[RMDB]
Conditions: 150 mM KOAc, 10 mM MgCl2 and 150 mM bicine (pH 8.5), 24 C. Structure probing data (2A3) for a 207-nucleotide construct. It was measured as part of the RMDB library RSTRND.

RNA sequence: GGGAACGACUCGAGUAGAGUCGAAAACUGACGCCAGGGAAAACGUCGGCCCCUAAGAUCGGGCGCGACUUAGUGGCGUCGCCGCGAGUAUUCUUGUACGGGGAAGCGCACUUCGCUGUCUCAUCCCGUGUGGCCACAGCCUCCUUAACGCGCGCCAGCAUUGCGAUUACUUCGGUAAUCGCAAUGCAAAAGAAACAACAACAACAAC
Reactivity to 2A3 in 0.01 (KOAc 150mM, MgCl2 10mM, bicine 150mM(pH8.5), 24C), signal-to-noise 2, nucleotides 027 to 156: c040u010g030a010c040g020c020c000a030g000g090g140a000a000a060a100c070g040u060c000g030g000c010c000c000c000u120a150a060g070a290u160c070g020g020g000c250g000c020g040a020c000u000u000a030g040u050g000g000c010g000u010c000g000c040c000g000c020g000a080g060u150a150u060u060c050u160u080g130u150a010c020g000g000g030g010a050a010g010c000g000c170a030c020u260u280c120g040c110u030g090u150c030u050c050a110u090c030c000c000g020u030g000u010g060g020c030c050a100c040a070g030c020c020u040c000c010u090u110a080a000c070g000c000g040c030g000c050c000a000